RNA sequence: GGGAACGACUCGAGUAGAGUCGAAAAGCAUGAUGAAGCAAUGCGAUGGAACAGAAUUGGAAUUACGGACGAGUUAGUGAAGGCCGUAGAAUCCAGAUACGAGAUCAUACUGGCAGGCCUGAUCAUCACAAGCCUUAUGCUUCGGCAUAAGGCUUGUAAAAGAAACAACAACAACAAC
Reactivity to 2A3 in 0.01 (KOAc 150mM, MgCl2 10mM, bicine 150mM(pH8.5), 24C), signal-to-noise 1, nucleotides 027 to 126: g040c000a010u010g010a050u090g040a110a050g100c020a030a120u100g080c030g050a040u030g040g040a050a000c040a070g120a060a160u140u030g030g010a060a060u010u000a070c010g040g000a010c010g010a070g100u110u070a020g010u170g130a070a060g010g010c000c040g000u010a040g060a070a080u000c000c000a030g020a050u160a000c120g000a000g000a060u120c000a020u040a130c010u000g020g000c010a000g020g000c000c000u050g000a050u050c010a010u110c040
Reactivity to DMS in 0.01 (KOAc 150mM, MgCl2 10mM, bicine 150mM(pH8.5), 24C), signal-to-noise 2, nucleotides 027 to 126: g020c030a020u000g000a090u000g050a060a080g010c030a080a070u000g000c050g020a050u010g000g030a140a080c060a130g020a070a110u000u000g000g000a080a060u000u010a050c070g010g010a040c060g000a190g010u000u000a130g010u040g010a170a130g000g020c000c000g000u000a030g020a130a080u000c000c000a040g020a100u010a080c090g030a080g000a130u000c070a060u010a070c040u000g010g000c090a050g010g020c010c010u000g000a060u000c020a050u030c150

About this RNA: This 177-nucleotide RNA was probed chemically with 2A3 and DMS. Source: RMDB library OK2TST, as collected in RNAgym. The reactions ran in a buffer of 150 mM KOAc, 10 mM MgCl2 and 150 mM bicine (pH 8.5), at 24 C. 2A3 adducts were read by reverse transcription with SuperScript II with manganese. The DMS profile rests on 980 reads.